Structure probing data (2A3) for a 207-nucleotide construct. For 2A3 the reverse transcriptase was SuperScript II with manganese. Reactivities are given for positions 27 through 156.

RNA sequence: GGGAACGACUCGAGUAGAGUCGAAAACUCCUAUACUGACUGGGAGGACUUUUCUUGUAUCUCCUCAGGGAACAGAAGGCCAAGAGGAACAGCCAGUGGGUACCCACCCUGCCCAACAGCUCCCACCACUUAGAUGCCGUGCCAUGCUCCACAACCAUCUCUCAUAGGAGUUCGCUCCUAUGAGAGAAAAAGAAACAACAACAACAAC
Reactivity to 2A3 in 0.01 (KOAc 150mM, MgCl2 10mM, bicine 150mM(pH8.5), 24C), signal-to-noise 2, nucleotides 027 to 156: c020u050c030c010u060a110u140a220c050u060g050a040c040u020g000g010g010a020g000g020a020c000u080u120u100u040c100u160u160g040u090a240u010c020u020c020c010u000c080a060g080g030g010a070a000c010a080g070a070a010g070g000c020c040a080a000g020a030g080g000a070a060c020a020g070c020c010a000g010u090g000g000g000u100a110c000c010c020a030c020c010c020u000g010c020c000c000a050a040c010a020g020c000u010c030c010c000a030c010c000a090c010u020u070a070g010a090u100g020c010c010g010u000g030c020c000a050u050g000c020u010c010c040a040c020a100a020c090c040a060

The RNA was probed in 150 mM KOAc, 10 mM MgCl2 and 150 mM bicine (pH 8.5) at 24 C. It was measured as part of the RMDB library OK3TST.